Chemical mapping of a 177-nucleotide RNA with DMS and 2A3. Source: RMDB library 15KREP, as collected in RNAgym. DMS adducts were read by reverse transcription with MarathonRT. The DMS profile rests on 602 reads.
RNA sequence: GGGAACGACUCGAGUAGAGUCGAAAACCUCACAGGGUUCAGAAUACCAGUACGUUAUCUUCUGUCAAACAGCAGAUACGGCACAUGCUAACAACAUUAACAGAUUUAAUGUUGCAAUCACUCGUGCGUUUAGGACAUCGUUCGCGAUGUCCUAAACAAAAGAAACAACAACAACAAC
Reactivity to DMS in 0.01 (KOAc 150mM, MgCl2 10mM, bicine 150mM(pH8.5), 24C), signal-to-noise 1, nucleotides 027 to 126: c030c000u000c040a120c220a090g020g040g020u000u000c060a090g020a190a110u010a030c160c030a180g010u010a110c040g000u030u010a000u000c050u000u000c000u040g000u000c200a050a030a300c040a010g030c090a040g020a010u000a010c010g060g000c050a000c010a060u000g000c100u020a090a170c000a040a030c000a030u000u000a000a010c220a180g020a210u000u000u000a010a010u010g010u000u000g000c060a010a030u010c020a050c080u000c060g040u000g010c130
Reactivity to 2A3 in 0.01 (KOAc 150mM, MgCl2 10mM, bicine 150mM(pH8.5), 24C), signal-to-noise 2, nucleotides 027 to 126: c000c010u040c000a080c020a070g070g000g050u040u100c050a030g050a140a030u100a130c030c000a030g080u050a050c050g020u120u010a000u050c010u080u000c000u000g080u050c100a210a110a140c000a040g000c020a010g010a000u000a020c000g010g060c010a020c020a070u040g050c020u080a100a030c000a000a020c000a000u000u020a030a020c050a140g130a300u020u070u030a020a000u000g010u000u000g080c040a010a060u040c000a030c060u040c050g060u030g060c070